[RMDB]
RNA sequence: GGGAACGACUCGAGUAGAGUCGAAAAAGCCAAUCCUUCGGGAUUGGCUACAGCAACGAAGCAAAGCAACGAGAGAAGACGAGCAAAAGAUCGAGCAUGCUACACACCCCAUCUUCGGAUGGGGUAAACGAUUCGUUCAAUUCGUUGAACGAAUCGUAAAAGAAACAACAACAACAAC
Reactivity to DMS in 0.01 (KOAc 150mM, MgCl2 10mM, bicine 150mM(pH8.5), 24C), signal-to-noise 2, nucleotides 027 to 126: a030g010c000c000a000a010u000c000c000u000u000c170g070g020g000a000u000u000g000g030c000u000a050c080a030g000c030a050a090c050g010a050a070g010c060a060a030a130g000c070a050a120c050g020a130g000a120g010a020a060g000a040c050g010a130g000c080a030a020a070a050g020a090u000c060g000a060g000c030a080u000g010c070u000a090c150a030c130a080c000c020c000c000a000u000c000u000u010c110g040g000a000u000g000g000g000g000u000a000a000
Reactivity to 2A3 in 0.01 (KOAc 150mM, MgCl2 10mM, bicine 150mM(pH8.5), 24C), signal-to-noise 1, nucleotides 027 to 126: a000g000c000c000a000a000u010c000c020u010u050c170g070g030g000a000u000u020g000g000c000u000a000c000a010g090c020a010a110c060g060a130a000g000c050a070a020a020g000c030a040a100c060g030a020g030a010g000a180a030g020a000c070g030a000g010c040a000a030a160a030g090a000u060c040g010a010g000c040a040u040g000c000u100a040c070a000c000a000c130c000c000c000a000u000c010u040u060c130g030g000a010u010g000g050g000g000u020a010a010
Overview:
Structure probing data (DMS and 2A3) for a 177-nucleotide construct. High 2A3 reactivity points to a flexible backbone, as in loops and unpaired stretches. It was measured as part of the RMDB library M2PK50. The RNA was probed in 150 mM KOAc, 10 mM MgCl2 and 150 mM bicine (pH 8.5) at 24 C. For DMS, 1,130 sequencing reads were counted.